An RNA of 177 nucleotides, treated with 2A3 and read out base by base. Source: RMDB library OK1LIB, as collected in RNAgym. The reactions ran in a buffer of 150 mM KOAc, 10 mM MgCl2 and 150 mM bicine (pH 8.5), at 24 C. The 2A3 profile rests on 633 reads.
[RMDB]
RNA sequence: GGGAACGACUCGAGUAGAGUCGAAAAACGGACGCUCCAUCGGCCUCUUCGUGGGCAUCUUCACCAUGACGGCCACCUGGGUGGGUGGCGGCUACAUCAACGGCACGGCGGAGGCUAUAUACACAUCAUGCGCAGCAUACUUCGGUAUGCUGCGCAUAAAAGAAACAACAACAACAAC
Reactivity to 2A3 in 0.01 (KOAc 150mM, MgCl2 10mM, bicine 150mM(pH8.5), 24C), signal-to-noise 2, nucleotides 027 to 126: a030c040g070g050a020c050g000c090u080c050c030a130u110c030g120g000c000c000u000c000u080u040c050g050u040g000g030g000c010a150u140c170u160u070c050a000c050c010a040u010g070a050c060g090g000c000c020a000c000c000u170g090g190g000u260g060g030g040u000g040g000c000g000g010c030u090a070c000a130u050c010a070a150c020g030g020c050a000c040g040g010c040g000g030a000g000g000c000u010a050u000a000u070a130c060a000c030a140u270c000